[RMDB]
RNA sequence: GGGAACGACUCGAGUAGAGUCGAAAAAUUACCAUAAUUCUGACUCAAUGGCACAAAUCAAAGAGAAGACUCGUGUCUUCUUGACACCAUAUAUAUGCUAUGUGCACUCAAAGAAUUGAGAAGCACACCACUGUCACACUUUCGAGUGUGACAGUGGAAAAGAAACAACAACAACAAC
Reactivity to 2A3 in 0.01 (KOAc 150mM, MgCl2 10mM, bicine 150mM(pH8.5), 24C), signal-to-noise 3, nucleotides 027 to 126: a000u060u040a070c010c000a020u070a030a220u130u020c070u080g120a090c040u000c040a060a140u070g000g050c020a010c080a160a040a150u100c030a080a120a080g030a020g040a040a010g010a000c010u080c250g300u210g000u100c040u030u000c020u010u110g000a010c000a030c010c020a000u060a000u030a000u020a050u300g080c070u120a010u120g000u000g000c020a010c000u010c010a020a080a020g130a300a300u060u030g000a000g000a170a050g010c010a010c000a000
Reactivity to DMS in 0.01 (KOAc 150mM, MgCl2 10mM, bicine 150mM(pH8.5), 24C), signal-to-noise 1, nucleotides 027 to 126: a000u090u020a300c000c000a120u140a010a210u070u000c070u000g000a120c000u050c090a090a080u050g000g000c100a040c050a070a000a030u070c050a030a260a110g000a000g000a010a000g000a000c000u140c170g000u100g080u020c000u000u000c000u000u000g000a000c210a020c300c100a000u000a150u000a150u000a050u000g000c190u030a000u090g000u000g000c020a180c000u000c000a100a080a120g000a000a280u000u000g000a100g000a250a180g000c000a140c210a030